The data come from the RNA Mapping Database (RMDB), library TTRDEL. This 177-nucleotide RNA was probed chemically with DMS and 2A3. Values cover nucleotides 27 to 126. Conditions: 150 mM KOAc, 10 mM MgCl2 and 150 mM bicine (pH 8.5), 24 C. The 2A3 profile rests on 2,234 reads.

RNA sequence: GGGAACGACUCGAGUAGAGUCGAAAAGAUAUGGAUGAUGACCUCCGAACUACCUCACCACUCGGAAACGAGUGUGUGAGGCGGAGCAAGUCCUAAGUCAAAACACUAAACGUUCGCGUUUAGUGAAGCUCAUCGAGUAGUUCGCUACUCGAUGAGCAAAAGAAACAACAACAACAAC
Reactivity to DMS in 0.01 (KOAc 150mM, MgCl2 10mM, bicine 150mM(pH8.5), 24C), signal-to-noise 1, nucleotides 027 to 126: g040a000u000a300u030g000g000a000u010g030a130u000g000a070c300c000u000c000c000g000a120a140c110u000a300c010c010u040c000a000c000c000a000c000u000c000g000g000a050a120a090c010g000a030g000u000g000u040g000u000g000a000g240g000c000g010g000a000g040c050a050a130g000u000c000c000u010a050a110g010u000c020a050a100a240a140c010a030c000u000a020a000a000c000g000u030u030c220g030c000g070u000u000u000a000g030u000g000a050a080
Reactivity to 2A3 in 0.01 (KOAc 150mM, MgCl2 10mM, bicine 150mM(pH8.5), 24C), signal-to-noise 2, nucleotides 027 to 126: g000a020u080a010u130g000g000a000u030g060a160u150g110a140c030c000u000c010c000g070a160a090c070u150a130c190c000u000c010a010c010c000a030c000u010c000g000g030a100a070a050c010g020a020g000u030g020u070g000u000g040a020g000g020c030g000g010a000g020c000a100a300g030u050c000c000u020a090a030g010u020c040a000a000a130a100c010a000c000u010a000a010a000c010g000u070u080c300g020c000g170u010u010u020a000g010u010g000a030a010